[RMDB]
RNA sequence: GGGAACGACUCGAGUAGAGUCGAAAAGGAGUCUAUGUGCCAGGGUGACCGCAUCAUUUAUCAUCCAAACGAGGACAUGUCUGCGAGCAAAGGAGGGCAGUGGGCACCGUCCCUGGGGCCACCGCGUGAAGCAGGGCUGCCCUACUUACUGCCAGGAGUCCCCGAUAAAUUUCGAUUUAUCGGGGACAAAAGAAACAACAACAACAAC
Reactivity to 2A3 in 0.01 (KOAc 150mM, MgCl2 10mM, bicine 150mM(pH8.5), 24C), signal-to-noise 1, nucleotides 027 to 156: g060g000a060g010u040c000u020a100u140g040u020g030c030c060a090g020g000g030u030g010a080c060c000g010c060a070u100c000a020u060u230u110a100u060c060a000u000c040c000a100a100a020c080g060a130g030g000a010c010a030u130g010u000c060u010g070c140g020a070g010c080a040a110a120g030g000a000g000g010g050c000a000g000u080g080g000g010c130a120c210c000g250u230c050c000c000u000g030g000g000g000c030c060a140c030c050g040c010g010u120g140a100a000g040c020a160g060g000g000c030u010g030c020c000c000u030a000c000u050u060a040c000u010g000c000c050a000g140g000a090